An RNA of 177 nucleotides, treated with DMS and read out base by base. Source: RMDB library RFMREP, as collected in RNAgym. Conditions: 150 mM KOAc, 10 mM MgCl2 and 150 mM bicine (pH 8.5), 24 C.
RNA sequence: GGGAACGACUCGAGUAGAGUCGAAAAGUAGCAUGCAAUGUCCUUCCUGUUCCCAUGCAGCUGGCCGAGGCUUCUCUUCCCUCUGCUCAAAUCCGAUUUGUAUUUCUUCCUUGUUAAUACCCCCAGAACUAUGUGACAUCUUCGGAUGUCACAUAGUAAAAGAAACAACAACAACAAC
Reactivity to DMS in 0.01 (KOAc 150mM, MgCl2 10mM, bicine 150mM(pH8.5), 24C), signal-to-noise 2, nucleotides 027 to 126: g010u010a070g020c060a060u010g010c050a050a100u010g000u000c030c020u000u010c010c020u000g000u000u000c000c010c000a130u000g000c060a070g020c060u000g020g010c060c040g000a070g000g010c070u000u010c020u000c050u000u000c020c020c000u000c060u000g010c050u010c080a040a070a070u000c050c050g010a130u010u010u010g020u000a070u010u000u000c030u020u000c040c030u020u010g010u000u000a090a060u010a290c060c010c000c020c050a120g000a070